[RMDB]
RNA sequence: GGGAACGACUCGAGUAGAGUCGAAAAGGGGUCAGACACGUUGGAGGUACUGACAUGCUCUGAAGCCUCCACGGAGCAACAGCAGUACUCCCCACCCAACGUUGUCUGACGGAGGCACCCAAAGGCAACAUUCGUACUUCGGUACGAAUGUUGCCAACCAACUGAAAGAGUUCGCUCUUUCAGUUGGAAAAGAAACAACAACAACAAC
Reactivity to 2A3 in 0.01 (KOAc 150mM, MgCl2 10mM, bicine 150mM(pH8.5), 24C), signal-to-noise 2, nucleotides 027 to 156: g060g010g010g010u020c000a000g010a000c000a000c000g010u000u000g020g010a030g010g030u010a000c000u030g060a070c050a150u250g000c000u000c000u000g090a100a020g000c000c000u020c020c000a000c010g010g000a010g000c040a050a050c060a140g170c000a000g020u000a000c020u110c020c050c000c010a040c000c010c000a000a000c010g050u150u180g000u000c000u000g000a000c010g010g010a010g000g020c010a030c010c000c010a050a070a030g000g000c000a010a010c000a000u000u000c000g000u000a010c010u030u120c300g040g000u000a000c000g000a000a000u000g000u000u000g010c000c000a000a000
Reactivity to DMS in 0.01 (KOAc 150mM, MgCl2 10mM, bicine 150mM(pH8.5), 24C), signal-to-noise 1, nucleotides 027 to 156: g000g020g040g000u000c020a020g000a030c010a000c010g010u010u000g000g010a300g000g000u000a070c010u010g010a100c070a300u030g000c000u000c000u000g000a050a130g000c040c000u010c000c010a300c080g040g010a050g040c050a140a110c110a200g090c010a020g040u000a020c010u030c300c020c030c120a300c090c020c030a010a040c020g000u000u030g020u000c010u010g020a010c010g000g020a080g040g020c010a060c030c000c040a050a070a240g020g020c000a000a030c000a010u000u010c000g000u000a010c000u000u000c300g010g090u020a000c030g030a000a010u010g030u010u040g010c000c000a010a030